An RNA of 177 nucleotides, treated with 2A3 and read out base by base.
[RMDB]
RNA sequence: GGGAACGACUCGAGUAGAGUCGAAAACGAACCAUGUCCUCGAAAUCGCGCGAUAUUUCAAGAACCGGACUGAGAACAUCCAAAAGGGCUCACUAAAGUCAUUCAGGAACAAGAUCUCCGGUAAGGCGCCUUACGAGCACUUCGGUGCUCGUAAGGCAAAAGAAACAACAACAACAAC
Reactivity to 2A3 in 0.01 (KOAc 150mM, MgCl2 10mM, bicine 150mM(pH8.5), 24C), signal-to-noise 1, nucleotides 027 to 126: c000g010a050a010c070c030a000u300g020u070c040c020u070c020g000a090a000a040u190c020g010c000g000c000g070a040u000a240u140u150u070c000a000a080g000a130a080c010c020g000g070a020c000u010g050a000g000a010a010c000a020u080c040c000a000a000a300a100g000g000g000c000u030c000a090c130u050a150a270a220g030u030c000a030u020u020c000a010g030g020a040a130c060a060a060g030a040u020c030u000c010c000g000g000u030a000a040g250g000c110

Conditions: 150 mM KOAc, 10 mM MgCl2 and 150 mM bicine (pH 8.5), 24 C.
For 2A3, 378 sequencing reads were counted.